The record gives the reactivity of an RNA of 177 nucleotides to DMS and 2A3. For DMS the reverse transcriptase was MarathonRT. It was measured as part of the RMDB library VIROID. For 2A3, 1,018 sequencing reads were counted. The RNA was probed in 150 mM KOAc, 10 mM MgCl2 and 150 mM bicine (pH 8.5) at 24 C.
RNA sequence: GGGAACGACUCGAGUAGAGUCGAAAACUCCUCCCGAUUCCGUCCAUCCCUCCUCCCAGGGGGUCGCCCAGGAAUGGCGGGACCCCACUUCAGCAGGGUCCGCGUUCCAUCCUUUCUUACCUGAUGGCAACAUGUUACACUUCGGUGUAACAUGUUGAAAAGAAACAACAACAACAAC
Reactivity to DMS in 0.01 (KOAc 150mM, MgCl2 10mM, bicine 150mM(pH8.5), 24C), signal-to-noise 2, nucleotides 027 to 126: c080u000c030c020u000c020c000c020g030a180u000u000c060c030g000u000c010c060a090u000c010c010c030u010c030c010u000c000c000c040a120g000g000g000g020g010u010c020g000c040c020c020a080g020g020a040a030u000g010g010c040g010g000g000a010c000c010c000c060a060c050u000u000c170a130g060c080a140g010g020g010u010c000c030g000c010g020u000u010c000c010a110u000c070c040u000u000u000c050u000u010a140c050c040u010g000a110u030g000g020
Reactivity to 2A3 in 0.01 (KOAc 150mM, MgCl2 10mM, bicine 150mM(pH8.5), 24C), signal-to-noise 1, nucleotides 027 to 126: c030u030c010c030u000c030c010c010g020a030u090u030c000c010g030u000c000c010a070u020c020c000c000u000c010c000u010c010c000c000a000g050g000g010g020g000u030c050g050c000c000c020a010g090g050a030a060u130g300g180c080g000g010g050a040c010c000c030c010a060c050u200u120c030a130g000c030a030g000g040g010u040c020c010g070c060g030u020u000c010c010a050u030c000c030u020u160u000c010u010u060a110c030c050u030g120a100u130g120g010